An RNA of 207 nucleotides, treated with 2A3 and read out base by base. For 2A3 the reverse transcriptase was SuperScript II with manganese.

RNA sequence: GGGAACGACUCGAGUAGAGUCGAAAAUCAAGGUAAAGCAUUGCCUGUAAUGCCUAGAUAGCAGGGACAGUUCAGGAGAAUCAGGUUGGUGAUUUCAUUUGUAAAUUCCCUGCCAUUUCCUUAAUCUCACAACUGUCAGCUGAGGACAAUGCAGAAGGCCAUUCGAACUCUUCGGAGUUCGAAUGGCAAAAGAAACAACAACAACAAC
Reactivity to 2A3 in 0.01 (KOAc 150mM, MgCl2 10mM, bicine 150mM(pH8.5), 24C), signal-to-noise 1, nucleotides 027 to 156: u090c010a060a000g170g000u160a150a050a000g010c000a000u000u050g000c050c090u110g070u160a010a090u060g050c000c020u000a120g030a150u150a010g040c000a010g070g000g000a010c000a020g030u000u090c020a000g020g070a000g050a060a070u080c060a150g020g000u020u050g000g020u140g000a070u030u100u040c070a100u040u200u290g120u120a010a030a020u070u070c050c040c010u020g000c040c000a050u060u140u200c030c000u110u120a030a050u060c020u010c000a080c020a060a000c000u000g000u060c000a030g050c060u050g010a000g000g000a020c000a000a040u040g000c020a050g060a070a090g030